[RMDB]
Source information
The record gives the reactivity of an RNA of 177 nucleotides to 2A3 and DMS. For 2A3 the reverse transcriptase was SuperScript II with manganese.
RNA sequence: GGGAACGACUCGAGUAGAGUCGAAAAAAAGAGGAAGGCCUUUCCUGAUAAAGGAGGACCAUUCUCAGUCAAGGGUAUGUGAGUACCUGUUCUCCCCUGCCAGAAUCUCAAACGAGCUCUCUGUAAACUGCAUUAUUACAUUCGUGUAAUAAUGCAGAAAAGAAACAACAACAACAAC
Reactivity to 2A3 in 0.01 (KOAc 150mM, MgCl2 10mM, bicine 150mM(pH8.5), 24C), signal-to-noise 9, nucleotides 027 to 126: a000a000a000g040a020g010g010a040a020g030g010c000c010u150u190u070c020c000u030g030a090u180a300a120a000g000g000a000g010g000a040c000c000a050u030u000c000u000c000a020g080u050c060a060a070g020g000g010u040a030u050g170u080g090a080g030u020a020c000c000u020g050u060u010c030u030c000c010c000c010u040g030c010c000a040g020a180a170u080c020u020c040a180a230a050c060g000a000g010c000u000c000u000c010u030g060u150a060a080a070
Reactivity to DMS in 0.01 (KOAc 150mM, MgCl2 10mM, bicine 150mM(pH8.5), 24C), signal-to-noise 9, nucleotides 027 to 126: a040a080a100g010a020g010g000a010a040g010g010c010c000u000u020u010c010c000u010g010a160u040a060a120a020g000g000a030g000g000a040c000c010a080u000u000c010u000c010a110g000u020c140a090a080g000g000g000u000a010u000g000u030g010a200g010u000a020c000c000u000g010u010u000c040u000c010c010c010c030u000g000c090c030a040g000a060a050u010c010u000c030a070a100a120c150g000a050g010c070u010c040u000c010u000g010u010a060a070a130
The data come from the RNA Mapping Database (RMDB), libraries RFM100 and RFMREP. Reactivities are given for positions 27 through 126. DMS adducts were read by reverse transcription with MarathonRT.